[RMDB]
RNA sequence: GGGAACGACUCGAGUAGAGUCGAAAAGCCGCAGCAGGCGCAUCGCUCACCUCCAACCUCGUCUUCAUCACUGGCGUGGGGCGGCACAGCGAUCCAGAGGUGGGCCCGGUGCUGCACGAAGCAAUACUCCACUCAUACAGUUCGCUGUAUGAGUGGAAAAAGAAACAACAACAACAAC
Reactivity to 2A3 in 0.01 (KOAc 150mM, MgCl2 10mM, bicine 150mM(pH8.5), 24C), signal-to-noise 2, nucleotides 027 to 126: g040c010c040g000c050a020g000c020a010g140g070c030g000c050a060u060c010g010c000u010c000a000c000c010u000c020c020a060a100c010c010u000c020g030u000c020u250u130c050a250u110c010a050c200u090g040g000c030g020u090g020g000g030g020c050g010g060c110a020c020a080g040c040g050a080u030c010c030a010g000a000g040g010u030g010g010g020c000c040c020g000g020u010g010c070u150g010c040a050c140g090a040a020g040c020a070a020u040a150c050
Reactivity to DMS in 0.01 (KOAc 150mM, MgCl2 10mM, bicine 150mM(pH8.5), 24C), signal-to-noise 3, nucleotides 027 to 126: g020c040c060g020c020a050g010c110a240g020g010c030g020c050a060u000c090g020c010u000c010a040c010c000u000c020c100a100a190c050c000u000c020g000u000c020u000u000c120a080u010c190a090c110u010g000g000c030g000u010g010g000g000g020c140g020g010c080a140c110a060g050c060g000a090u020c110c090a150g000a040g010g010u000g010g000g000c010c050c020g020g000u000g000c000u000g020c000a100c050g000a180a100g000c020a140a040u000a120c120
This 177-nucleotide RNA was probed chemically with 2A3 and DMS. Source: RMDB library OK2TRN, as collected in RNAgym. DMS adducts were read by reverse transcription with MarathonRT. For DMS, 1,718 sequencing reads were counted. The RNA was probed in 150 mM KOAc, 10 mM MgCl2 and 150 mM bicine (pH 8.5) at 24 C.